[RMDB]
RNA sequence: GGGAACGACUCGAGUAGAGUCGAAAAACGCAUCAUACGUGAUGCGAGAACUACAGUUCCGCUCCUCUAGCACACAGAGGUCAAUUGGGUGCGACCCCCCCCUCUCCCGUGGAUCAACGGGAACCAAAAAAGACCCUUUAGUUCGCUAAAGGGUCAACAAUACGUAUGGGUUCGCCCAUACGUAUUGAAAAGAAACAACAACAACAAC
Reactivity to 2A3 in 0.01 (KOAc 150mM, MgCl2 10mM, bicine 150mM(pH8.5), 24C), signal-to-noise 3, nucleotides 027 to 156: a000c000g010c000a010u000c000a010u060a100c260g120u100g030a030u080g020c020g000a010g020a020a000c110u230a080c070a100g000u030u010c030c020g030c030u080c010c040u010c020u030a030g020c020a030c000a000c010a060g020a000g000g000u010c010a030a050u140u120g080g000g000u010g050c000g190a280c010c000c000c010c000c010c000c000u000c000u020c000c010c010g010u020g040g110a220u190c070a090a000c000g000g010g010a000a010c010c010a000a050a040a050a010a060g000a010c000c000c080u000u000u000a000g000u000u030c130g010c110u000a000a000a010g010g000g000u000c000a000a000
Reactivity to DMS in 0.01 (KOAc 150mM, MgCl2 10mM, bicine 150mM(pH8.5), 24C), signal-to-noise 3, nucleotides 027 to 156: a170c030g010c000a010u010c010a110u000a120c260g010u010g010a010u000g000c000g010a050g020a090a100c050u010a090c090a130g010u000u000c020c030g020c060u010c020c010u010c060u020a130g010c070a080c080a100c110a070g000a040g010g020u010c080a060a120u000u000g020g010g020u010g010c080g020a300c010c010c000c000c010c010c010c020u010c060u000c000c020c000g030u010g000g030a210u010c120a110a020c000g010g020g010a010a080c060c030a000a040a080a080a070a090g010a020c010c000c000u000u000u000a020g010u000u000c300g050c000u000a010a020a010g000g020g020u000c000a000a000